The data come from the RNA Mapping Database (RMDB), library TTRDEL. An RNA of 177 nucleotides, treated with 2A3 and DMS and read out base by base. For 2A3 the reverse transcriptase was SuperScript II with manganese. DMS adducts were read by reverse transcription with MarathonRT.
RNA sequence: GGGAACGACUCGAGUAGAGUCGAAAAGAUAUGGACUGCGUAGGAUAGAGCAACAGCCACAGGGUCGGAAACGACCCGUGGACAUGCUCCUGUCCUAAGUCAAAAGUACUAACUUCGGUUAGUACAAGAUUACCACCAGGUUCGCCUGGUGGUAAUCAAAAGAAACAACAACAACAAC
Reactivity to 2A3 in 0.01 (KOAc 150mM, MgCl2 10mM, bicine 150mM(pH8.5), 24C), signal-to-noise 2, nucleotides 027 to 126: g070a060u220a100u300g140g010a030c040u100g070c300g270u150a010g010g030a040u010a030g010a020g010c010a010a100c030a170g060c010c040a000c150a260g000g000g010u020c030g010g000a060a050a060c040g000a020c010c000c010g000u000g010g000a030c000a030u020g000c000u030c030c040u040g000u000c000c000u020a030a000g030u000c000a000a000a040a190g000u000a000c010u000a000a020c000u060u120c290g080g000u000u020a010g000u000a000c010a000a010
Reactivity to DMS in 0.01 (KOAc 150mM, MgCl2 10mM, bicine 150mM(pH8.5), 24C), signal-to-noise 2, nucleotides 027 to 126: g010a120u010a040u010g030g010a050c010u010g020c280g000u010a020g010g010a020u000a020g020a020g010c000a030a080c300a110g000c000c000a010c010a160g030g010g010u000c000g010g000a090a060a270c020g010a010c000c000c010g000u000g000g010a020c090a110u010g000c010u000c090c090u020g000u000c010c000u000a050a020g000u000c020a070a070a100a090g000u000a000c000u000a010a000c000u000u000c190g020g000u000u000a010g000u020a000c000a070a040